RNA sequence: GGGAACGACUCGAGUAGAGUCGAAAAAGGUUCGCUGUGGUGCAACUCUUAUUAGUAACUAAUCCAAAGCAAGUAUAGGAGAACAGGUUUUUAACUAUUUUUACGCAGAUAAAAAAUAGUAUUUGACAAAAUCGAUUGUCGUUCGCGACAAUCGAAAUCUUAGAUCUGACUUCGGUCAGAUCUAAGAAAAAGAAACAACAACAACAAC
Reactivity to 2A3 in 0.01 (KOAc 150mM, MgCl2 10mM, bicine 150mM(pH8.5), 24C), signal-to-noise 1, nucleotides 027 to 156: a060g040g000u030u020c030g000c050u040g070u080g090g040u090g010c010a030a020c010u000c010u120u060a070u100u070a060g030u050a090a050c080u020a080a060u010c040c040a100a020a030g000c020a000a060g000u080a100u060a140g000g000a060g040a050a020c090a060g000g060u070u030u000u000u000a020a010c000u010a000u000u000u000u000u030a080c040g000c060a010g110a250u240a080a030a000a000a000a000u000a000g020u010a080u120u060u150g010a010c020a020a090a000a050u000c000g000a000u010u010g000u000c020g000u040u050c260g000c010g080a000c000a000a000u000c020g000a000a000a000
Structure probing data (2A3) for a 207-nucleotide construct.
Reactivities are given for positions 27 through 156.
The reactions ran in a buffer of 150 mM KOAc, 10 mM MgCl2 and 150 mM bicine (pH 8.5), at 24 C.